Annotation
The record gives the reactivity of an RNA of 177 nucleotides to 2A3 and DMS. For 2A3 the reverse transcriptase was SuperScript II with manganese. The data come from the RNA Mapping Database (RMDB), library M2PK50.
[RMDB]
RNA sequence: GGGAACGACUCGAGUAGAGUCGAAAAUCAAACGAUUUCGAUCGUUUGAAACGGACCACUCCUGCGGGAGUUAAGGCCAUACGGACAGCCGGGUGCACUGCCAGUCAUUCGGUUUCGACCGAAUGAAUCAUAGUAACAGCUUCGGCUGUUACUAUGAAAAAGAAACAACAACAACAAC
Reactivity to 2A3 in 0.01 (KOAc 150mM, MgCl2 10mM, bicine 150mM(pH8.5), 24C), signal-to-noise 5, nucleotides 027 to 126: u020c000a000a000a000c000g000a020u050u070u200c200g110a000u010c010g000u000u000u010g010a030a000a010c040g020g030a030c010c010a010c020u010c000c000u040g020c220g070g010g000a010g010u030u110a060a020g010g000c010c000a040u070a090c060g030g030a020c010a020g020c010c000g040g000g010u020g020c030a010c080u080g020c020c010a020g070u030c000a000u000u010c000g000g040u020u040u120c200g070a020c010c000g000a000a000u010g000a010a050
Reactivity to DMS in 0.01 (KOAc 150mM, MgCl2 10mM, bicine 150mM(pH8.5), 24C), signal-to-noise 7, nucleotides 027 to 126: u000c000a000a000a000c000g010a020u000u000u010c180g010a020u000c000g010u000u000u000g000a010a120a130c170g000g010a080c020c020a080c020u000c010c010u010g040c140g040g010g000a030g010u000u010a040a050g010g010c020c010a090u010a110c110g000g000a050c050a100g010c030c030g010g010g010u010g020c080a080c090u000g010c050c050a130g010u000c000a010u000u000c000g010g010u000u000u000c160g010a020c010c000g000a010a000u000g000a040a100